[RMDB]
RNA sequence: GGGAACGACUCGAGUAGAGUCGAAAAAUGAAAGAGGGGUGGGAUCACACUGAGAGAGUGGAGAGUGACAUGUGCUGGACACUGUCCAUGAAGCACUGAGCAGAAGCUGGAGGCACAACGCACCAGACACUCACAGCAAGGAUGGAGCUGAAAACAUAACCCACUCUGUCCUGGAAGCACUUGGAAGCCUAGAGGAGGCCGUUAACAAGGAAGGAAGGUCCUCCUUUGGCAAUGGAUGGGGAUUGAGUUAGGAGAAGGACUUGAAAACUCAAGGCUUCGGCCUUGAGAAAAGAAACAACAACAACAAC
Reactivity to DMS in 0.01 (KOAc 150mM, MgCl2 10mM, bicine 150mM(pH8.5), 24C), signal-to-noise 1, nucleotides 027 to 266: a110u000g000a000a120a160g000a110g020g010g000g000u000g000g000g020a020u020c100a150c090a110c070u000g010a150g050a050g010a130g010u010g010g010a190g020a070g020u050g000a100c080a060u000g000u000g000c050u020g010g020a110c070a110c140u020g000u000c000c010a120u020g020a150a090g040c120a100c050u000g020a060g010c000a060g010a110a300g020c050u020g000g000a230g060g000c050a070c170a020a130c150g000c010a060c030c050a110g000a110c100a110c010u010c040a100c050a050g020c170a060a010g000g000a030u000g020g000a000g010c150u000g000a040a030a100a170c080a180u010a160a070c190c070c050a160c000u000c000u000g000u000c000c090u000g030g030a120a070g000c070a060c110u000u040g000g000a110a140g010c000c050u000a080g010a060g050g000a020g020g030c020c000g000u040u040a040a060c180a040a130g000g050a130a040g010g000a080a100g000g010u080c000c000u000c000c000u030u010u000g000g010c000a080a090u020g000g000a030u010g010g000g000g020a020u030u000g000a170g000u050u010a120g000g000a000g010a060a090g000g010a090c110u040u020g000a180a100a130a090